[RMDB]
RNA sequence: GGGAACGACUCGAGUAGAGUCGAAAACACACAAGGUUCGCCUUGUGUGCAAGAAUAGACGAAUACUACCGUAGAAGUAUUCAGGUGACAUAACUACGGAAAUGGCGUUCUGCUUCGGCAGAACGAAUAUCAUCAAGCAUUUCGAUGCUUGAUGAUAAAAAGAAACAACAACAACAAC
Reactivity to DMS in 0.01 (KOAc 150mM, MgCl2 10mM, bicine 150mM(pH8.5), 24C), signal-to-noise 5, nucleotides 027 to 126: c000a000c000a000c000a010a010g000g020u000u010c240g010c010c000u000u000g020u000g020u000g000c060a060a080g000a140a090u010a090g010a110c090g010a020a020u000a010c000u000a100c000c000g000u000a010g000a220a020g000u000a010u000u000c000a070g010g020u000g000a100c090a070u010a090a150c010u000a010c000g000g000a240a070a090u010g000g010c000g000u000u000c000u000g000c000u000u010c170g040g000c000a010g000a000a000c000g000a010a080
Reactivity to 2A3 in 0.01 (KOAc 150mM, MgCl2 10mM, bicine 150mM(pH8.5), 24C), signal-to-noise 7, nucleotides 027 to 126: c000a000c000a000c000a010a000g040g000u030u070c140g120c040c000u000u000g000u000g000u000g010c010a040a040g110a090a080u150a150g090a060c040g010a010a000u010a020c010u080a300c000c010g010u010a000g010a130a000g010u020a020u020u020c020a010g130g090u150g050a020c040a140u180a180a070c020u010a010c010g010g110a030a060a070u220g180g020c000g000u000u010c000u000g000c000u010u040c120g120g000c000a000g000a000a000c000g000a000a010

An RNA of 177 nucleotides, treated with DMS and 2A3 and read out base by base. Source: RMDB library M2PK50, as collected in RNAgym. The reactions ran in a buffer of 150 mM KOAc, 10 mM MgCl2 and 150 mM bicine (pH 8.5), at 24 C. 2A3 adducts were read by reverse transcription with SuperScript II with manganese. For DMS, 5,978 sequencing reads were counted. Values are in units of 0.01, from 0 to 300, in steps of 10. For DMS the reverse transcriptase was MarathonRT. The 2A3 profile rests on 12,225 reads. Values cover nucleotides 27 to 126.